An RNA of 177 nucleotides, treated with 2A3 and DMS and read out base by base. Values cover nucleotides 27 to 126. Values are in units of 0.01, from 0 to 300, in steps of 10. DMS adducts were read by reverse transcription with MarathonRT. It was measured as part of the RMDB library OK2TRN.

RNA sequence: GGGAACGACUCGAGUAGAGUCGAAAAAAGCCGUUGACGCCGCGGCGCGUCAGGGCAAGUUUAGUAAGCGCCCGAUCGGCCCCAUCGGGCAGCACCUGUCGCUGAGCGAUGAGCGCUGGGCAUCCGCAGCUCAGAGCAAAUUCGUUUGCUCUGAGCUAAAAGAAACAACAACAACAAC
Reactivity to 2A3 in 0.01 (KOAc 150mM, MgCl2 10mM, bicine 150mM(pH8.5), 24C), signal-to-noise 1, nucleotides 027 to 126: a000a000g040c030c010g090u050u050g000a010c010g000c060c020g060c130g260g000c200g030c000g010u000c010a000g000g000g000c010a050a000g030u060u130u130a170g000u060a170a020g060c020g000c070c000c070g010a080u050c060g180g000c000c000c000c000a000u000c020g000g060g000c030a000g000c000a040c030c080u150g020u230c070g010c040u040g070a040g060c060g040a070u130g110a040g040c040g020c050u030g000g040g000c020a040u060c060c010g060c000
Reactivity to DMS in 0.01 (KOAc 150mM, MgCl2 10mM, bicine 150mM(pH8.5), 24C), signal-to-noise 2, nucleotides 027 to 126: a110a110g010c020c000g010u010u000g000a020c000g020c000c050g040c190g020g010c240g020c000g010u010c010a030g000g000g030c000a080a030g010u000u000u000a100g010u010a110a140g010c080g000c010c010c020g000a040u020c100g010g000c000c020c010c130a130u010c020g000g010g030c000a020g030c010a040c080c040u000g000u000c060g010c020u000g010a110g010c060g020a060u000g010a080g010c030g020c020u020g010g000g000c070a090u000c030c020g000c130